[RMDB]
RNA sequence: GGGAACGACUCGAGUAGAGUCGAAAAACUUUUUGAUUCGUCAAAAAGUAACUACCGAGAAUGCGACUCGGUAUACGCAAAUAACCCUUGGAUACAAGGGAACAAACUAACGUUUCGACGUUAGUAAUCUGUCUCUUUCUUUCGAGAAAGAGACAGAAAAAGAAACAACAACAACAAC
Reactivity to 2A3 in 0.01 (KOAc 150mM, MgCl2 10mM, bicine 150mM(pH8.5), 24C), signal-to-noise 2, nucleotides 027 to 126: a000c020u060u010u000u000u000g020a020u010u020c060g030u010c030a000a000a000a000a000g010u020a000a110c060u020a010c010c010g000a010g000a090a140u270g110c170g100a020c010u010c000g010g000u020a030u030a000c060g010c010a050a080a070u120a100a150c000c000c000u020u010g070g020a140u110a300c000a000a000g000g000g020a020a000c000a020a050a000c000u010a010a000c000g000u020u020u090c160g090a000c000g000u020u000a000g000u020a010a080
Reactivity to DMS in 0.01 (KOAc 150mM, MgCl2 10mM, bicine 150mM(pH8.5), 24C), signal-to-noise 2, nucleotides 027 to 126: a030c000u000u010u010u020u000g050a020u010u010c180g000u010c000a000a000a010a020a040g000u000a120a010c190u000a010c000c000g080a000g040a090a150u020g050c270g000a030c010u010c000g030g000u000a010u040a050c180g020c150a020a060a050u020a080a080c010c000c000u000u010g010g000a220u000a060c020a050a000g010g000g010a110a080c160a090a120a060c000u040a000a010c000g000u000u000u010c170g000a030c000g000u010u000a000g000u000a030a050